[RMDB]
RNA sequence: GGGAACGACUCGAGUAGAGUCGAAAAGAGCUCAUCAACAACGUCAAGAUGCAUCUAGAGCUGCAUCAAGAGCAGUUUCAAGUGAAGAAUCAGAGGGAGAGGAUUUUCCCGUAUCCACCAACCGCGACAGUAAAUAGCGUUUCGACGCUAUUUACUGAAAAGAAACAACAACAACAAC
Reactivity to 2A3 in 0.01 (KOAc 150mM, MgCl2 10mM, bicine 150mM(pH8.5), 24C), signal-to-noise 5, nucleotides 027 to 126: g060a000g030c010u010c030a060u060c010a030a110c000a010a030c030g070u020c030a030a070g020a020u030g010c010a010u010c030u130a080g020a040g160c040u010g010c000a030u050c040a060a000g030a000g060c050a030g010u010u090u100c070a100a020g020u020g070a120a110g020a070a110u090c060a040g030a060g090g030g040a060g000a040g070g020a030u050u020u040u040c010c000c000g000u060a060u010c030c020a040c030c010a050a030c010c030g070c040g080a050
Reactivity to DMS in 0.01 (KOAc 150mM, MgCl2 10mM, bicine 150mM(pH8.5), 24C), signal-to-noise 6, nucleotides 027 to 126: g000a120g000c040u010c020a050u000c090a070a130c150a050a060c080g020u010c050a090a240g000a030u000g000c020a030u000c080u000a110g010a110g000c180u000g000c020a010u000c080a060a210g010a050g010c040a050g010u000u010u000c110a100a110g010u010g020a050a080g000a100a070u000c030a070g010a110g010g000g010a100g010a090g000g010a080u010u000u000u000c000c000c000g020u010a040u000c030c010a100c090c050a080a120c050c060g010c120g020a180